[RMDB]
RNA sequence: GGGAACGACUCGAGUAGAGUCGAAAAUAGUAGGCGGAGGAAAAGAAAGCAAUAUGCGAUGUCGUUAGUAACGGCGAGCGAAAUCGACUUAGAACAAACUGAAUCCCUUUUAGUAAUAUUAGGGAGAACCGGUAGUAGAGUUCGCUCUACUACCGGUAAAAGAAACAACAACAACAAC
Reactivity to DMS in 0.01 (KOAc 150mM, MgCl2 10mM, bicine 150mM(pH8.5), 24C), signal-to-noise 2, nucleotides 027 to 126: u010a090g020u000a050g000g030c000g010g010a040g000g010a030a020a040a050g000a120a020a120g000c090a100a090u090a110u010g000c000g020a090u040g000u010c030g000u020u030a130g020u040a110a060c110g010g000c010g000a120g000c070g000a000a080a050u000c070g000a050c020u000u010a080g010a070a130c160a080a110a110c080u010g020a090a120u000c030c020c000u050u000u000u000a000g000u030a100a060u000a010u010u010a000g000g000g000a020g020a090
Reactivity to 2A3 in 0.01 (KOAc 150mM, MgCl2 10mM, bicine 150mM(pH8.5), 24C), signal-to-noise 3, nucleotides 027 to 126: u110a000g190u000a010g010g040c070g010g060a040g040g110a050a020a000a010g120a050a060a000g040c030a020a100u140a130u300g010c010g020a050u080g030u030c030g010u000u010a070g010u090a050a080c000g030g030c080g020a000g000c020g060a040a010a030u090c020g120a100c030u070u110a030g030a100a010c070a050a040a060c090u060g040a040a000u050c000c000c000u000u000u020u020a000g020u010a020a150u020a040u030u020a000g000g000g000a010g000a020
Annotation
The record gives the reactivity of an RNA of 177 nucleotides to DMS and 2A3. 2A3 adducts were read by reverse transcription with SuperScript II with manganese. The RNA was probed in 150 mM KOAc, 10 mM MgCl2 and 150 mM bicine (pH 8.5) at 24 C. Source: RMDB libraries RFM100 and RFMREP, as collected in RNAgym. For 2A3, 2,034 sequencing reads were counted.